[RMDB]
RNA sequence: GGGAACGACUCGAGUAGAGUCGAAAAGAGGGGAAGAGGAUGUGCACCGAGGCGCCCUCGGUCCGUGCCACCACGAAGAGGUUCCUGUCCACGAGGGCCACAUUGCCUGCCUUAUCCCUGGCCUCGACUGACUCACAUGAUUCGUCAUGUGAGUCAGAAAAGAAACAACAACAACAAC
Reactivity to DMS in 0.01 (KOAc 150mM, MgCl2 10mM, bicine 150mM(pH8.5), 24C), signal-to-noise 3, nucleotides 027 to 126: g020a160g000g010g020g010a070a300g000a060g000g010a060u000g010u000g000c040a070c150c050g020a150g010g000c120g000c040c010c020u000c020g010g000u020c030c050g040u000g000c120c090a090c200c010a040c050g010a140a070g000a100g020g010u000u000c070c000u000g000u000c060c070a110c060g010a050g000g010g010c000c030a030c100a070u000u010g000c030c000u010g000c010c010u000u000a210u010c000c010c000u000g000g010c050c010u000c080g010a230
Reactivity to 2A3 in 0.01 (KOAc 150mM, MgCl2 10mM, bicine 150mM(pH8.5), 24C), signal-to-noise 2, nucleotides 027 to 126: g080a010g050g010g010g020a020a060g020a020g070g000a030u080g080u160g020c010a030c060c080g080a130g020g090c130g030c020c010c000u010c010g020g000u000c010c000g000u030g030c040c050a140c040c000a060c090g090a130a040g070a030g150g000u060u020c020c010u040g030u050c040c030a080c060g010a020g010g000g000c010c000a040c010a030u060u090g020c010c020u060g060c030c000u030u030a050u050c000c010c000u020g150g000c000c010u030c020g050a100
Notes: This 177-nucleotide RNA was probed chemically with DMS and 2A3. For DMS, 2,492 sequencing reads were counted. The RNA was probed in 150 mM KOAc, 10 mM MgCl2 and 150 mM bicine (pH 8.5) at 24 C. Reactivities are given for positions 27 through 126. For 2A3 the reverse transcriptase was SuperScript II with manganese. It was measured as part of the RMDB library OK2TST.